[RMDB]
RNA sequence: GGGAACGACUCGAGUAGAGUCGAAAAGUCGGCGAUUGUGGAGACCGUGUUUGCCUGGCCAGGACUGGGCAGCGGGUUUGUGCGGGCCAUAACCUUAAGCGACCUCAAUGUGGUUCAGGCGAUGAUCGGCACUGGUACUAUUCGUAGUACCAGUGCCAAAAGAAACAACAACAACAAC
Reactivity to DMS in 0.01 (KOAc 150mM, MgCl2 10mM, bicine 150mM(pH8.5), 24C), signal-to-noise 2, nucleotides 027 to 126: g000u010c000g000g020c030g000a070u000u010g000u000g000g030a070g000a160c090c010g000u020g050u060u010u010g010c000c020u000g000g000c000c020a120g020g000a070c070u050g000g020g000c090a160g000c090g000g000g010u050u010u000g060u010g030c060g000g010g030c050c100a030u040a090a100c030c000u010u020a170a210g000c050g000a090c050c000u000c010a090a170u060g020u050g010g000u000u000c040a070g030g000c030g000a060u030g000a200u000c060
Reactivity to 2A3 in 0.01 (KOAc 150mM, MgCl2 10mM, bicine 150mM(pH8.5), 24C), signal-to-noise 2, nucleotides 027 to 126: g080u070c030g030g010c030g070a070u090u140g060u050g130g030a040g090a090c030c060g020u060g110u180u120u110g040c000c010u000g010g020c030c050a040g050g130a150c080u050g010g020g000c020a000g000c030g000g020g040u010u030u090g090u040g000c030g010g020g000c000c050a090u090a090a040c000c000u020u110a050a020g000c010g050a100c000c000u060c040a090a180u140g030u050g120g000u030u130c010a010g010g000c030g040a050u050g030a050u090c060
Annotation
Structure probing data (DMS and 2A3) for a 177-nucleotide construct. The reactions ran in a buffer of 150 mM KOAc, 10 mM MgCl2 and 150 mM bicine (pH 8.5), at 24 C. For 2A3, 1,941 sequencing reads were counted. The DMS profile rests on 2,098 reads. For 2A3 the reverse transcriptase was SuperScript II with manganese. For DMS the reverse transcriptase was MarathonRT.